[RMDB]
Description
The record gives the reactivity of an RNA of 177 nucleotides to DMS and 2A3.
RNA sequence: GGGAACGACUCGAGUAGAGUCGAAAAGGGAUAGCCUAGGGCAUAUAAGAUAGAUAUAGCGUUUAGUCGAUCAUUUGUCUUUUUCUAGGAAAUUUCUAGUUAAAUAGAGAUAGUUCACUAAUUAUUAGACCUAUAGUCCUUUCGAGGACUAUAGGUCAAAAGAAACAACAACAACAAC
Reactivity to DMS in 0.01 (KOAc 150mM, MgCl2 10mM, bicine 150mM(pH8.5), 24C), signal-to-noise 1, nucleotides 027 to 126: g000g000g020a040u000a080g000c030c020u000a040g010g010g010c300a100u030a040u010a040a030g010a030u000a000g060a020u000a030u040a160g000c040g050u010u000u050a230g040u000c010g000a040u000c170a050u000u030u010g050u000c010u000u000u050u000u000c050u000a010g000g000a110a070a060u000u000u010c000u010a070g000u000u010a030a050a110u010a080g000a120g000a000u030a140g000u010u010c040a060c120u020a110a030u010u040a170u040u010a140
Reactivity to 2A3 in 0.01 (KOAc 150mM, MgCl2 10mM, bicine 150mM(pH8.5), 24C), signal-to-noise 2, nucleotides 027 to 126: g000g000g000a060u070a030g080c010c000u000a000g030g110g000c130a010u070a010u060a130a030g010a050u020a000g060a000u010a000u060a210g030c020g000u070u230u040a040g010u050c020g020a060u010c020a000u000u000u040g060u070c020u020u190u090u030u010c000u010a000g000g080a000a290a040u140u060u010c000u000a040g020u020u130a030a050a120u060a080g030a000g020a060u030a130g040u020u020c030a040c020u090a250a000u120u020a020u100u120a130

For 2A3, 682 sequencing reads were counted. The RNA was probed in 150 mM KOAc, 10 mM MgCl2 and 150 mM bicine (pH 8.5) at 24 C. For 2A3 the reverse transcriptase was SuperScript II with manganese.